An RNA of 177 nucleotides, treated with DMS and 2A3 and read out base by base. Values cover nucleotides 27 to 126. The RNA was probed in 150 mM KOAc, 10 mM MgCl2 and 150 mM bicine (pH 8.5) at 24 C. For DMS the reverse transcriptase was MarathonRT.
[RMDB]
RNA sequence: GGGAACGACUCGAGUAGAGUCGAAAAUGCGGCGUCAUCCAGAGCAUCUGCUAUCUGGGGAGGGGGAGGCAGGCGGCCAGAGACUGCGCAGCGAUUCCAGAGUUGCUGGCAGUGCUGCGCAGCGAGGAGCUAUUAUGUGAUUCGUCACAUAAUAGCUAAAAGAAACAACAACAACAAC
Reactivity to DMS in 0.01 (KOAc 150mM, MgCl2 10mM, bicine 150mM(pH8.5), 24C), signal-to-noise 9, nucleotides 027 to 126: u000g010c060g010g010c060g010u000c070a090u000c030c030a060g000a090g010c050a160u010c140u010g020c040u000a090u010c050u000g010g000g010g010a110g010g010g000g000g010a100g010g010c060a060g000g010c090g010g000c020c040a080g000a130g010a140c000u000g000c000g010c000a010g010c000g000a180u010u000c010c010a030g000a300g010u010u010g020c010u000g000g000c230a100g000u010g010c000u000g000c010g010c000a010g010c030g000a150g010g010
Reactivity to 2A3 in 0.01 (KOAc 150mM, MgCl2 10mM, bicine 150mM(pH8.5), 24C), signal-to-noise 4, nucleotides 027 to 126: u100g010c030g020g000c030g020u060c030a070u020c020c040a010g000a000g030c020a100u160c100u220g020c040u070a090u150c040u040g020g000g000g040a080g030g020g000g000g000a040g020g000c020a010g030g000c020g020g000c020c000a030g020a020g030a160c000u000g000c010g000c010a000g000c000g030a040u160u000c010c000a010g030a030g150u250u290g170c000u000g000g000c010a010g020u020g020c000u010g000c000g000c000a000g000c000g000a040g010g060